[RMDB]
RNA sequence: GGGAACGACUCGAGUAGAGUCGAAAAGAUAUGGAGUGCCUUCAGCGGUAAUACGCUAAGUUUCGGAAACGAAACAGCGUGCCAGCUGAGGCACUCCUAAGUCAAAAGGGACGGUUCGCCGUCCCAACAACAAAGUCUUGUUCGCAAGACUUUGUUGAAAAGAAACAACAACAACAAC
Reactivity to 2A3 in 0.01 (KOAc 150mM, MgCl2 10mM, bicine 150mM(pH8.5), 24C), signal-to-noise 4, nucleotides 027 to 126: g030a010u040a050u150g000g000a010g000u010g020c020c020u200u210c030a010g000c030g050g000u140a300a160u230a220c010g010c010u100a280a110g000u010u010u020c010g020g030a040a100a080c020g000a000a010a000c010a000g020c000g010u000g000c030c020a050g000c000u000g010a000g000g000c000a000c000u000c010c000u010a010a000g000u000c000a000a000a040a120g000g010g000a000c000g030g020u060u140c290g040c140c000g000u000c000c000c000a000a000
Reactivity to DMS in 0.01 (KOAc 150mM, MgCl2 10mM, bicine 150mM(pH8.5), 24C), signal-to-noise 5, nucleotides 027 to 126: g000a060u000a300u000g000g000a030g020u000g010c010c010u000u000c010a010g030c020g030g010u020a100a130u020a160c000g020c010u010a160a110g000u000u000u010c000g000g000a140a110a220c000g010a000a000a010c000a030g000c000g030u000g010c010c010a140g040c000u000g010a020g000g010c000a000c000u000c000c000u010a000a070g000u010c030a070a090a140a160g010g010g000a010c010g010g010u000u020c300g030c000c000g010u000c010c000c010a020a040
Overview: The record gives the reactivity of an RNA of 177 nucleotides to 2A3 and DMS. For DMS the reverse transcriptase was MarathonRT. The reactions ran in a buffer of 150 mM KOAc, 10 mM MgCl2 and 150 mM bicine (pH 8.5), at 24 C.